[RMDB]
RNA sequence: GGGAACGACUCGAGUAGAGUCGAAAAAUAAAGCAAGGGUGAGCCGGCCUACGAGAACCCAAAGAAGAACGCCGAGGUCAAGGUCAUAGAGGAACGCAAGGAAGAUCACGACCUACCUACUGAAAAACGAUAAGAAGGUGUUCGCACCUUCUUAUCGAAAAGAAACAACAACAACAAC
Reactivity to 2A3 in 0.01 (KOAc 150mM, MgCl2 10mM, bicine 150mM(pH8.5), 24C), signal-to-noise 1, nucleotides 027 to 126: a000u040a020a060a000g060c050a060a090g060g000g000u040g040a030g060c020c010g000g000c000c010u030a050c100g030a020g050a080a060c010c000c020a030a020a000g100a030a000g000a040a030c030g000c030c020g050a040g030g000u040c070a040a040g000g010u080c000a030u120a060g070a030g020g070a100a040c060g020c080a010a080g080g040a070a020g060a010u060c020a000c120g010a010c000c000u000a060c020c020u090a090c010u070g100a000a040a020a040a000
Reactivity to DMS in 0.01 (KOAc 150mM, MgCl2 10mM, bicine 150mM(pH8.5), 24C), signal-to-noise 2, nucleotides 027 to 126: a050u000a070a100a060g020c100a050a070g000g010g000u000g020a110g000c020c050g000g000c020c030u010a100c080g020a160g020a060a090c010c040c020a070a090a110g010a050a060g000a030a120c170g020c080c050g000a090g030g000u000c050a160a050g000g000u010c040a060u000a060g000a090g020g000a090a100c120g040c130a040a070g000g010a080a080g000a050u000c020a110c190g010a030c040c010u000a080c030c050u000a080c110u010g000a040a010a040a050a130